Chemical mapping of a 207-nucleotide RNA with DMS and 2A3. The RNA was probed in 150 mM KOAc, 10 mM MgCl2 and 150 mM bicine (pH 8.5) at 24 C.
[RMDB]
RNA sequence: GGGAACGACUCGAGUAGAGUCGAAAAGCUAGUCGGAGACGACUAGCAACGAUCAGUUCGCUGAUCGGAAGGUGCAUUCAAAUACGCUAGAAGCACCAAUAACCGACGCGUAGCGUAAAACUGAGAAAGCAGAUAACAAAAAUAAAAAGGCGUCGAGCAUUAAUCCGCUAUUCGUAGCGGAUUAAUGAAAAGAAACAACAACAACAAC
Reactivity to DMS in 0.01 (KOAc 150mM, MgCl2 10mM, bicine 150mM(pH8.5), 24C), signal-to-noise 1, nucleotides 027 to 156: g070c000u000a020g000u040c020g000g010a300g020a280c050g050a020c000u000a000g010c010a030a020c030g000a020u000c050a000g030u000u010c300g000c000u000g000a000u000c020g020g010a030a100g080g020u050g000c020a210u000u000c120a060a150a270u000a000c020g000c020u000a060g000a120a180g000c070a000c000c000a170a040u030a050a150c090c000g000a120c040g070c130g000u000a020g020c000g050u000a090a050a030a160c080u000g000a090g000a220a130a070g050c060a050g020a160u020a160a300c130a060a180a030a110a040u000a020a090a050a120a300g000g080c000g030u010c030g010a280g000
Reactivity to 2A3 in 0.01 (KOAc 150mM, MgCl2 10mM, bicine 150mM(pH8.5), 24C), signal-to-noise 2, nucleotides 027 to 156: g000c000u000a000g000u030c010g000g020a040g030a110c000g000a010c000u000a000g010c010a000a020c020g010a000u000c000a010g010u100u100c170g000c170u000g000a020u000c010g020g070a050a060g020g010u000g000c070a240u010u040c020a020a020a090u040a010c000g010c010u000a000g000a020a000g000c010a000c000c000a000a040u100a060a020c060c030g000a000c020g000c020g030u050a040g010c020g000u010a040a060a090a110c020u030g010a030g080a220a110a040g100c040a020g080a140u220a090a080c040a060a150a110a050a010u180a100a140a040a010a000g110g000c010g010u000c000g010a020g000
For 2A3, 945 sequencing reads were counted. 2A3 adducts were read by reverse transcription with SuperScript II with manganese. It was measured as part of the RMDB library OK3TST. Values cover nucleotides 27 to 156.